[RMDB]
RNA sequence: GGGAACGACUCGAGUAGAGUCGAAAAAUGGCUUCCAUCCUGGGCCUCUUCUUCGGGGGCCCUCCCUCUUCGUUCCUCUUCUUUGAUCUCAACAUUCCGAGGACGUUUCCCAGCCAGGGGUUGUCAUAUGCCUCUCUGUUCGCAGAGAGGAAAAGAAACAACAACAACAAC
Reactivity to 2A3 in 0.01 (KOAc 150mM, MgCl2 10mM, bicine 150mM(pH8.5), 24C), signal-to-noise 5, nucleotides 027 to 129: a000u080g030g000c000u130u020c030c020a090u050c030c040u030g000g020g000c040c010u020c000u140u050c020u090u110c090g020g000g010g000g010c000c000c000u010c000c000c000u010c010u040u020c020g040u040u060c000c010u020c020u100u040c020u030u070u100g090a150u060c050u000c040a040a140c030a180u150u040c080c010g010a050g020g040a090c000g020u010u040u020c000c010c010a010g060c030c010a020g000g020g000g000u020u010g030u010c040a050u070a040u280g040
Reactivity to DMS in 0.01 (KOAc 150mM, MgCl2 10mM, bicine 150mM(pH8.5), 24C), signal-to-noise 5, nucleotides 027 to 129: a030u070g000g020c020u040u000c010c010a150u000c040c030u000g030g020g040c020c000u010c050u060u030c150u080u040c150g010g030g020g020g020c000c000c000u030c000c000c000u030c060u000u020c060g000u030u020c030c020u010c080u030u010c040u000u000u000g040a040u020c040u000c050a190a100c190a120u000u000c040c030g040a070g030g010a020c020g040u000u000u000c040c020c030a060g000c080c080a090g060g020g010g030u000u000g020u000c040a080u030a070u060g020
The record gives the reactivity of an RNA of 170 nucleotides to 2A3 and DMS. 2A3 adducts were read by reverse transcription with SuperScript II with manganese. DMS (dimethyl sulfate) methylates the pairing face of unpaired adenines and cytosines. For 2A3, 18,032 sequencing reads were counted. The RNA was probed in 150 mM KOAc, 10 mM MgCl2 and 150 mM bicine (pH 8.5) at 24 C.